[RMDB]
RNA sequence: GGGAACGACUCGAGUAGAGUCGAAAAGAAAGAAAGAAAGAAAUCUGACAGAAUGACGGAUUCGAUCGUUGUGGUCGGCGGGCCACCACGUCAUUCCUUCGCACUGUCUACGGGCAGACCGCCAUAAAAAAGCGGAUCUACUUCGGUAGAUCCGCAACUAGGCCACAUACUUCGGUAUGUGGCCUAGAAAAGAAACAACAACAACAAC
Reactivity to 2A3 in 0.01 (KOAc 150mM, MgCl2 10mM, bicine 150mM(pH8.5), 24C), signal-to-noise 1, nucleotides 027 to 156: g090a060a030a000g090a060a110a000g060a020a100a010g070a000a090a050u130c090u030g010a040c010a020g000a110a200u040g040a000c030g000g020a010u020u140c110g050a140u230c110g000u020u000g000u000g010g010u030c040g070g070c080g010g010g000c000c000a000c000c010a000c010g000u000c000a040u020u060c010c020u000u040c020g000c000a110c020u010g010u000c010u050a100c140g000g040g000c020a050g040a180c000c000g010c020c010a180u300a060a150a000a000a000a040g000c000g000g000a000u010c010u000a000c000u090u010c270g000g000u020a010g000a000u000c000c010g000c000a000a030